[RMDB]
RNA sequence: GGGAACGACUCGAGUAGAGUCGAAAAGUUGAAUGGAGGAGUAUGAAGUACGAUACACCCUUGGUAACUCGAUCAGGUGAGCCUAGGGAUAUAGGAGGUGAACCCAGAGAGAUACCCUAUAUGUGGACGAAAAUCGUCAUUUCGAUGACGAUUUUCGAAAAGAAACAACAACAACAAC
Reactivity to DMS in 0.01 (KOAc 150mM, MgCl2 10mM, bicine 150mM(pH8.5), 24C), signal-to-noise 2, nucleotides 027 to 126: g050u000u000g000a090a150u000g000g020a120g000g000a140g000u000a040u010g010a070a100g030u010a060c090g000a050u000a150c110a160c010c020c060u020u000g010g020u000a070a070c010u000c070g000a150u000c040a080g000g010u000g000a300g000c020c020u000a020g020g000g030a140u000a110u000a050g000g000a010g000g030u000g000a260a060c020c030c040a120g000a050g000a060g000a120u010a020c040c010c210u000a070u000a100u000g000u020g020g010a250
Source: RMDB library OK2TST, as collected in RNAgym. An RNA of 177 nucleotides, treated with DMS and read out base by base. Reactivities are given for positions 27 through 126.